RNA sequence: GGGAACGACUCGAGUAGAGUCGAAAAGAACGCCACUUCGGUGGCGUUCGAAGAUCUAGCACACGUAGAUCACUAUCGUGUGAGACAUCGAUAGAUGUCAAAUGGUCCGGAAGUUCGCUUCCGGAAAAGAUACUCCAUGUUUCGACAUGGAGUAUCUAAAAGAAACAACAACAACAAC
Reactivity to 2A3 in 0.01 (KOAc 150mM, MgCl2 10mM, bicine 150mM(pH8.5), 24C), signal-to-noise 4, nucleotides 027 to 126: g000a000a000c000g000c010c000a000c010u020u050c190g110g000u000g000g010c000g000u010u000c000g020a000a010g030a020u040c040u060a040g080c020a010c000a000c010g020u030a010g020a170u180c090a060c250u070a070u190c030g000u000g000u000g010a110g000a010c000a000u000c010g060a040u120a280g000a000u020g010u010c010a000a070a070u160g090g040u000c000c000g010g000a000a010g010u050u110c160g050c130u010u000c000c000g000g000a010a000a000
Reactivity to DMS in 0.01 (KOAc 150mM, MgCl2 10mM, bicine 150mM(pH8.5), 24C), signal-to-noise 6, nucleotides 027 to 126: g000a000a010c010g020c000c000a010c000u000u010c180g040g020u000g010g010c000g020u000u000c000g000a100a090g010a080u010c040u010a150g020c010a020c000a010c010g000u000a030g010a180u010c300a120c080u000a020u010c020g010u000g000u000g000a280g000a020c010a000u000c000g000a160u020a110g010a010u000g000u000c010a060a050a100u010g010g000u000c000c000g000g010a020a000g000u000u010c250g010c010u000u000c000c000g000g000a000a010a050
Structure probing data (2A3 and DMS) for a 177-nucleotide construct.
It was measured as part of the RMDB library M2PK50.
2A3 is a SHAPE reagent: it acylates the 2'-hydroxyl of flexible nucleotides of all four kinds.
For DMS, 7,538 sequencing reads were counted.
2A3 adducts were read by reverse transcription with SuperScript II with manganese.
The RNA was probed in 150 mM KOAc, 10 mM MgCl2 and 150 mM bicine (pH 8.5) at 24 C.
DMS (dimethyl sulfate) methylates the pairing face of unpaired adenines and cytosines.